An RNA of 177 nucleotides, treated with DMS and 2A3 and read out base by base.
Source: RMDB library OK1LIB, as collected in RNAgym.
For 2A3, 2,812 sequencing reads were counted.
The reactions ran in a buffer of 150 mM KOAc, 10 mM MgCl2 and 150 mM bicine (pH 8.5), at 24 C.

RNA sequence: GGGAACGACUCGAGUAGAGUCGAAAAGCGAUCUGCUGUUGGGAUUCGGGGCGGCGCUGGCCGGCACCGUCAUCGCCGUUUUGGUUCCGCUGGUAACCAAGCGUGUCAUAGACGACGCGAUCGCGGCCCUAGCUGGGGUUUUCGAACCCCAGCUAGGAAAAGAAACAACAACAACAAC
Reactivity to DMS in 0.01 (KOAc 150mM, MgCl2 10mM, bicine 150mM(pH8.5), 24C), signal-to-noise 2, nucleotides 027 to 126: g030c020g020a030u030c070u070g060c000u030g000u010u010g000g030g000a170u000u020c050g000g030g000g000c030g000g010c010g010c130u010g000g010c040c090g000g000c020a070c050c070g020u000c110a010u010c110g000c000c000g010u000u030u010u000g020g000u000u010c000c040g040c180u040g000g010u010a000a040c020c020a060a020g000c000g000u040g010u030c070a180u010a160g030a130c080g000a010c010g000c000g000a050u000c060g000c020g020g000c070
Reactivity to 2A3 in 0.01 (KOAc 150mM, MgCl2 10mM, bicine 150mM(pH8.5), 24C), signal-to-noise 4, nucleotides 027 to 126: g000c000g000a030u010c040u240g000c050u110g020u040u070g080g020g010a090u160u120c020g030g000g010g010c000g010g020c020g000c120u100g110g050c010c000g070g010c060a060c060c050g010u010c020a060u040c020g000c010c000g000u120u030u080u040g000g000u020u010c010c050g100c200u140g020g000u040a000a010c010c000a020a010g000c020g000u100g080u100c060a110u140a070g060a060c090g010a010c030g040c010g010a020u000c010g000c000g060g000c000